[RMDB]
RNA sequence: GGGAACGACUCGAGUAGAGUCGAAAAAAACUUAACAACUCGAGACGGUAAGAAGGAAACUAAGGAGUAGAAGAAGAAGGGUGAAAAGAUGAAAGAAAUUUCACCACAUGCAGGGAAAGGGUAACUCGUUACCUGUACAGUUCGCUGUACAGGUAACAAAAGAAACAACAACAACAAC
Reactivity to 2A3 in 0.01 (KOAc 150mM, MgCl2 10mM, bicine 150mM(pH8.5), 24C), signal-to-noise 1, nucleotides 027 to 126: a000a000a010c090u090u030a080a000c080a040a000c010u010c010g000a000g000a020c030g010g030u050a020a020g010a040a030g020g000a100a000a020c040u040a060a030g030g000a040g050u070a050g050a140a000g010a040a000g000a030a040g030g000g010u030g000a020a000a010a020g080a050u120g060a030a020a080g070a000a090a020u000u010u010c030a040c000c000a020c020a010u080g010c020a010g010g000g020a040a070a020g090g010g010u030a050a000c020u020c060
Reactivity to DMS in 0.01 (KOAc 150mM, MgCl2 10mM, bicine 150mM(pH8.5), 24C), signal-to-noise 2, nucleotides 027 to 126: a030a060a000c040u000u000a040a100c140a140a050c040u000c010g020a040g050a110c030g000g020u020a070a070g000a040a040g000g010a050a030a090c050u010a030a070g000g000a110g010u030a060g020a050a050g000a040a060g020a050a070g010g000g010u000g000a030a020a020a040g000a090u020g010a060a050a060g000a020a040a110u000u000u000c010a030c040c010a100c090a030u000g010c070a040g000g000g000a040a090a050g020g000g010u000a010a100c170u020c160
Description: An RNA of 177 nucleotides, treated with 2A3 and DMS and read out base by base. It was measured as part of the RMDB library RFMREP. DMS adducts were read by reverse transcription with MarathonRT. The RNA was probed in 150 mM KOAc, 10 mM MgCl2 and 150 mM bicine (pH 8.5) at 24 C. Reactivities are given for positions 27 through 126. For 2A3, 1,355 sequencing reads were counted.